RNA sequence: GGGAACGACUCGAGUAGAGUCGAAAAGAGAUAAGAAGCCUCGUUACAACACGACUACGAGGCGGGGUAGUACAGCACAGCGUGACGGUUAUUACGGUGUACCAACCAAUGAUGCUGAACGAGCAAACUUGGCGAAUGCUAAAGUUACUUGGUUCAAUAUCCAGUUGCUUUUCGAAGCAACUGGAUAAAAAGAAACAACAACAACAAC
Reactivity to 2A3 in 0.01 (KOAc 150mM, MgCl2 10mM, bicine 150mM(pH8.5), 24C), signal-to-noise 1, nucleotides 027 to 156: g030a000g000a030u090a230a000g160a160a110g000c000c010u060c000g000u030u060a020c030a300a120c120a040c240g090a050c040u040a000c030g010a000g000g000c040g000g000g000g000u140a160g020u080a090c010a060g040c010a010c030a030g110c010g050u060g070a040c020g130g020u080u010a090u010u060a050c020g110g000u020g100u050a000c000c020a010a040c000c000a060a070u070g050a050u030g000c000u000g000a020a000c000g000a030g020c030a040a000a020c000u020u000g030g000c060g140a140a120u190g000c030u170a210a000a000g020u000u000a010c000u040u050g020g100u030u060c020a010a010

Chemical mapping of a 207-nucleotide RNA with 2A3. The RNA was probed in 150 mM KOAc, 10 mM MgCl2 and 150 mM bicine (pH 8.5) at 24 C.